[RMDB]
RNA sequence: GGGAACGACUCGAGUAGAGUCGAAAAUUACGUCGCACGAGACGGCGGGCUGGUCUAUGGCGUCUAUGAGCCGGACGGGACCAGCGCCAAGCACUGCUACAACAUGAAGAAGGUUAACGGAGAGUGGAUCUACACCUCCGAGCCGCACGACAUUACGGUAAUAGCCAGGGUUCGCCCUGGCUAUUACAAAAGAAACAACAACAACAAC
Reactivity to 2A3 in 0.01 (KOAc 150mM, MgCl2 10mM, bicine 150mM(pH8.5), 24C), signal-to-noise 1, nucleotides 027 to 156: u090u060a060c070g020u030c000g000c030a000c170g080a060g000a050c040g000g000c040g080g090g060c000u000g010g000u000c000u030a090u210g240g040c040g020u150c070u000a170u140g180a060g030c050c130g030g000a020c010g030g060g000a000c020c000a000g060c000g000c000c000a000a000g010c030a030c130u050g000c000u060a000c000a210a000c000a150u080g040a100a100g010a110a040g030g050u030u000a030a090c030g000g030a100g010a030g010u040g000g020a030u080c030u110a090c000a000c000c000u000c000c000g000a000g010c000c000g040c000a100c110g140a000c000a020u160u130a070c090g140